[RMDB]
RNA sequence: GGGAACGACUCGAGUAGAGUCGAAAAGCAUUCCACUUCGGUGGAAUGCAAAUGCCGGCUGCAAGAAAAGUGCUUCAAAGAGUGGGAGCACUGCCCAAGAAAAAAGUUCCAUGUUCGCAUGGAACAAGAUGUACUAUCACUUCGGUGAUAGUACAUCAAAAGAAACAACAACAACAAC
Reactivity to 2A3 in 0.01 (KOAc 150mM, MgCl2 10mM, bicine 150mM(pH8.5), 24C), signal-to-noise 4, nucleotides 027 to 126: g010c000a000u010u000c010c000a000c010u020u050c170g080g010u000g010g000a000a000u000g000c000a000a010a030u060g020c010c010g080g030c050u070g010c040a070a050g040a090a160a010a010g010u010g000c000u020u020c040a090a160a090g150a110g100u180g030g000g010a000g010c000a000c000u000g010c010c000c010a070a070g160a070a110a010a010a000a010g000u000u000c000c010a000u000g050u010u060c220g000c060a000u000g000g010a000a000c000a000a010
Reactivity to DMS in 0.01 (KOAc 150mM, MgCl2 10mM, bicine 150mM(pH8.5), 24C), signal-to-noise 3, nucleotides 027 to 126: g010c000a000u000u000c000c000a000c000u000u010c210g020g020u000g010g000a010a010u000g000c010a010a040a090u000g010c030c050g010g000c030u010g010c050a060a080g000a080a060a110a040g030u000g010c020u000u000c020a060a110a170g000a170g010u010g020g010g000a020g000c020a000c020u000g010c010c010c030a110a140g010a030a050a040a090a070a090g000u000u000c000c000a010u000g010u000u010c190g010c000a010u000g000g010a010a000c010a050a050